[RMDB]
RNA sequence: GGGAACGACUCGAGUAGAGUCGAAAAAGAAUAGUUUUCGAACUAUUCUCACGACGACCUUGGGAAACCCUGAGGCGCGAUCCCACGCGAUCGUCAGUUCGAACACCUGGUUGUUCGCAACCAGGAACUAUUAACCUAAUUUCGAUUAGGUUAAUAGAAAAGAAACAACAACAACAAC
Reactivity to DMS in 0.01 (KOAc 150mM, MgCl2 10mM, bicine 150mM(pH8.5), 24C), signal-to-noise 8, nucleotides 027 to 126: a020g010a030a010u000a010g000u000u000u010u010c140g020a020a020c000u000a010u000u000c000u000c150a140c100g000a030c020g010a200c040c000u000u000g010g000g010a130a140a130c250c010c020u000g000a030g000g000c100g010c010g000a090u000c000c010c010a230c070g010c030g010a120u000c020g010u000c030a120g000u000u000c090g010a110a110c250a140c010c000u000g000g010u000u000g010u000u010c180g010c010a010a010c010c000a010g000g000a020a060
Reactivity to 2A3 in 0.01 (KOAc 150mM, MgCl2 10mM, bicine 150mM(pH8.5), 24C), signal-to-noise 9, nucleotides 027 to 126: a000g010a000a000u020a010g000u010u030u080u150c200g030a010a000c000u000a000u020u000c020u030c020a090c070g060a010c010g080a100c010c000u020u000g030g000g000a280a300a190c050c010c000u010g010a010g020g010c010g010c010g010a040u020c000c010c010a020c020g050c030g070a130u080c010g040u020c040a080g100u100u170c060g070a090a030c060a060c080c000u000g030g010u000u010g020u050u060c230g020c070a000a000c000c000a000g010g010a000a000